[RMDB]
RNA sequence: GGGAACGACUCGAGUAGAGUCGAAAACUGGAGUUGGUAAACAAAGAAAACCCUAUUAAGCUGUGGGUGCAGUUUAUAUUAAAGGCUAGACUGAGCUGCUCUAUCAUUGAAUCAGGGAGUCUGUCCGUAAUACAGUGUGGACCGAAAGUGAAACAGCCCUUCAGUUAAGUUUCGACUUAACUGAAGGAAAAGAAACAACAACAACAAC
Reactivity to DMS in 0.01 (KOAc 150mM, MgCl2 10mM, bicine 150mM(pH8.5), 24C), signal-to-noise 3, nucleotides 027 to 156: c030u000g030g010a250g020u000u000g000g020u000a060a080a170c060a060a060a140g000a170a110a080a100c050c000c010u000a160u000u000a050a070g040c060u010g010u000g020g020g030u000g010c000a050g010u000u010u000a050u010a110u020u000a060a070a100g020g030c030u000a030g010a100c040u020g010a140g000c000u010g010c090u010c040u010a070u000c060a120u000u000g020a110a110u010c070a080g000g060g020a100g050u010c020u000g020u010c000c030g000u000a050a110u000a070c090a070g010u000g030u000g010g000a070c050c030g000a050a070a100g020u000g000a120a060a060c060a090g000c060
Reactivity to 2A3 in 0.01 (KOAc 150mM, MgCl2 10mM, bicine 150mM(pH8.5), 24C), signal-to-noise 3, nucleotides 027 to 156: c030u030g020g000a070g050u080u080g060g020u090a080a070a050c070a070a190a040g090a070a130a100a080c030c000c000u080a100u100u060a060a030g010c030u040g050u080g060g040g050u060g020c000a010g010u030u080u030a120u050a040u060u150a090a100a040g030g000c020u030a010g000a060c030u020g020a010g060c000u040g010c000u030c010u090a140u080c050a110u030u170g080a130a040u070c020a030g020g030g020a020g060u000c010u040g020u000c010c030g040u030a060a040u120a100c050a060g060u010g030u050g080g020a020c010c010g050a080a060a030g040u050g050a070a070a020c020a030g020c010